An RNA of 207 nucleotides, treated with DMS and 2A3 and read out base by base. The DMS profile rests on 2,905 reads. Reactivities are rounded to 0.1 and cut off at 0 and 3. The RNA was probed in 150 mM KOAc, 10 mM MgCl2 and 150 mM bicine (pH 8.5) at 24 C.
[RMDB]
RNA sequence: GGGAACGACUCGAGUAGAGUCGAAAAUGAUGCCGCUGGGUAACCGCAACGUGCAGACCGUGCUGGCAGAGGAAAUGGCAGACGCAGCGCAGAGCGCAAUGCUUGCCACUACCGGCUUUGAUGUCGAUCUGCUGCUGCAGACGCUGGAGCUGACAGACCGGAUGUAAUGAUUCGUCAUUACAUCCGGAAAAGAAACAACAACAACAAC
Reactivity to DMS in 0.01 (KOAc 150mM, MgCl2 10mM, bicine 150mM(pH8.5), 24C), signal-to-noise 1, nucleotides 027 to 156: u000g060a120u000g030c020c030g020c030u000g040g010g020u010a050a160c040c030g000c030a030a030c030g000u000g050c010a050g030a080c050c040g000u010g030c010u000g010g010c060a090g020a070g000g010a110a060a120u000g000g040c010a050g020a260c160g030c010a160g030c070g000c050a060g010a070g010c030g030c020a070a040u000g040c040u000u020g000c000c020a080c070u000a160c100c050g000g000c050u010u010u000g000a140u000g000u020c040g000a010u000c010u070g030c000u020g030c010u000g000c020a040g000a140c130g000c010u000g000g000a140g010c010u000g000a100c010a070g040a300
Reactivity to 2A3 in 0.01 (KOAc 150mM, MgCl2 10mM, bicine 150mM(pH8.5), 24C), signal-to-noise 4, nucleotides 027 to 156: u130g030a030u070g010c000c000g010c020u070g030g000g090u120a160a100c110c000g040c040a060a130c120g090u170g000c010a010g070a090c020c040g040u080g020c040u070g010g000c020a020g020a030g070g070a060a150a090u210g010g000c010a000g020a050c040g000c000a010g010c000g000c010a010g000a020g030c030g000c040a020a060u230g080c010u030u040g020c020c000a050c020u170a110c040c090g000g000c000u090u100u090g070a070u100g150u250c020g010a060u000c010u000g010c090u160g000c020u000g000c020a000g000a020c010g000c010u010g010g050a030g030c030u020g050a030c000a030g150a080